[RMDB]
RNA sequence: GGGAACGACUCGAGUAGAGUCGAAAAGAUAUGGAAUUGAACUACAGUAAUUUACAGCGAAGAACUCGGAAACGAGGGAGCUGUAACCACUGCAAUUCCUAAGUCAAAAGUGUGGUUCGCCACACAAUCUUCUAAGGUACUUCGGUACCUUAGAAGAAAAAGAAACAACAACAACAAC
Reactivity to DMS in 0.01 (KOAc 150mM, MgCl2 10mM, bicine 150mM(pH8.5), 24C), signal-to-noise 3, nucleotides 027 to 126: g000a050u010a300u000g000g010a020a010u000u010g000a080a060c080u040a280c020a000g010u020a220a140u000u000u000a000c000a010g020c000g000a090a180g000a130a210c000u010c000g010g000a030a060a220c010g030a010g000g000g000a040g010c000u010g010u000a000a010c300c250a010c020u000g010c000a000a010u000u000c000c000u000a080a130g000u010c050a080a050a130a070g000u000g010u000g000g010u000u000c190g020c000c000a000c010a010c010a010a040
Reactivity to 2A3 in 0.01 (KOAc 150mM, MgCl2 10mM, bicine 150mM(pH8.5), 24C), signal-to-noise 2, nucleotides 027 to 126: g030a010u060a050u200g000g030a000a010u030u010g030a100a050c120u160a070c300a000g000u030a030a050u070u020u000a010c000a000g000c030g210a300a040g050a070a110c010u000c000g000g050a080a120a080c000g000a010g000g000g020a000g000c000u000g010u000a000a000c020c030a030c010u020g030c000a010a000u010u000c000c010u030a100a020g080u030c020a030a030a080a150g000u010g000u010g000g090u050u160c300g040c060c000a000c000a000c010a000a070